Chemical mapping of a 177-nucleotide RNA with 2A3 and DMS. 2A3 adducts were read by reverse transcription with SuperScript II with manganese. For 2A3, 2,209 sequencing reads were counted. For DMS, 1,145 sequencing reads were counted. It was measured as part of the RMDB library TTRDES. Reactivities are given for positions 27 through 126.
RNA sequence: GGGAACGACUCGAGUAGAGUCGAAAAGAUAUGGAUCAUGAUGUCGAGCUUGUCAUCGGAAACGAUGAUACAAGCGAAGACAGCAUCCGCUGAUCCUAAGUCAAACGUACGUGUUCGCACGUACGAAUCCGAUUUCUAACUUCGGUUAGAAAUCGGAAAAAGAAACAACAACAACAAC
Reactivity to 2A3 in 0.01 (KOAc 150mM, MgCl2 10mM, bicine 150mM(pH8.5), 24C), signal-to-noise 1, nucleotides 027 to 126: g020a020u060a030u080g010g010a010u010c000a030u190g020a010u080g080u150c040g010a040g030c030u000u000g030u000c000a000u000c000g030g040a070a100a000c020g010a000u000g010a020u070a150c020a000a010g000c040g030a030a040g110a020c020a000g010c010a000u020c010c030g010c060u050g000a000u000c040c000u040a140a030g040u030c070a120a110a070c030g010u030a010c000g000u000g010u150u100c300g000c170a020c000g020u020a000c000g020a000a030
Reactivity to DMS in 0.01 (KOAc 150mM, MgCl2 10mM, bicine 150mM(pH8.5), 24C), signal-to-noise 2, nucleotides 027 to 126: g000a020u010a300u010g000g000a010u000c000a030u010g020a060u000g000u000c000g000a200g000c010u000u000g020u000c000a000u000c000g070g000a070a030a290c030g000a000u000g000a170u000a050c050a030a000g000c010g000a060a140g010a050c300a140g000c020a010u000c070c300g000c120u010g030a030u000c000c000u000a040a090g000u000c010a130a050a180c030g000u000a030c010g030u000g010u070u010c290g010c020a000c000g000u020a010c000g010a050a040